[RMDB]
Structure probing data (DMS and 2A3) for a 177-nucleotide construct. Reactivities are rounded to 0.1 and cut off at 0 and 3. Conditions: 150 mM KOAc, 10 mM MgCl2 and 150 mM bicine (pH 8.5), 24 C.

RNA sequence: GGGAACGACUCGAGUAGAGUCGAAAAAGCUCAGUGGUAAACCAACAGUUGAAAGACAAAGUGGCUAUCAUCGAACACCAGGAAGGGCGUAAAGUGUAUCGUAAAGAGCAGCUGACACUUAAAGAUGAAGUGAUUAUGUGUUCGCACAUAAUCACUUAAAAGAAACAACAACAACAAC
Reactivity to DMS in 0.01 (KOAc 150mM, MgCl2 10mM, bicine 150mM(pH8.5), 24C), signal-to-noise 5, nucleotides 027 to 126: a100g020c060u000c020a060g040u000g010g010u000a030a080a120c050c020a040a080c080a130g010u010u000g010a080a080a090g000a060c060a060a070a080g020u000g010g010c100u000a030u000c040a040u000c070g020a060a070c070a080c030c030a090g010g000a090a060g000g000g010c040g000u000a040a020a060g010u000g010u000a040u000c070g000u000a040a070a110g010a060g000c050a070g010c060u010g010a050c070a030c050u000u010a050a070a100g000a110u010g010
Reactivity to 2A3 in 0.01 (KOAc 150mM, MgCl2 10mM, bicine 150mM(pH8.5), 24C), signal-to-noise 3, nucleotides 027 to 126: a000g050c040u030c050a030g010u030g030g020u070a050a090a070c010c020a000a080c020a040g010u070u070g080a100a070a010g030a020c060a060a090a010g030u030g010g000c010u030a030u090c020a010u070c060g030a020a010c010a020c040c000a000g080g030a040a040g040g060g000c060g040u080a020a050a050g040u020g020u030a080u100c020g000u040a100a110a020g060a030g030c020a010g020c020u040g030a030c020a010c040u100u060a160a080a020g130a080u220g100

For 2A3, 3,280 sequencing reads were counted. DMS adducts were read by reverse transcription with MarathonRT.